Source: RMDB library RNAMAK, as collected in RNAgym. Structure probing data (DMS) for a 207-nucleotide construct. The DMS profile rests on 2,467 reads. The reactions ran in a buffer of 150 mM KOAc, 10 mM MgCl2 and 150 mM bicine (pH 8.5), at 24 C.

RNA sequence: GGGAACGACUCGAGUAGAGUCGAAAAUCCUAAGUCGAAGGGGACUACUUGGAUUUAGCGUUGGGAGUCACCUCGGAAACGAGGUGACAUCGAUCAACGCUUGUCAGUAGUCCGACUUCGAUAUGGAAAAAUCAGUGGAGCUUCGGCUCCACUGAAAGAAUGUCAAUGUGUUCGCACAUUGACAUUCAAAAGAAACAACAACAACAAC
Reactivity to DMS in 0.01 (KOAc 150mM, MgCl2 10mM, bicine 150mM(pH8.5), 24C), signal-to-noise 1, nucleotides 027 to 156: u000c000c000u000a050a220g010u010c000g020a020a000g050g010g040g010a040c000u010a020c000u010u010g040g020a080u010u000u000a000g020c000g020u000u000g000g010g040a090g020u000c000a010c000c040u010c010g000g000a170a090a300c020g040a050g030g000u020g030a000c000a000u000c000g000a140u000c010a030a020c000g060c000u000u000g010u000c000a040g040u010a020g000u020c010c030g010a030c020u000u000c010g010a000u000a120u000g010g000a020a140a130a180a110u000c010a020g000u000g030g020a010g040c010u010u000c300g000g010c020u000c000c000a010c000u000g000a020a080a140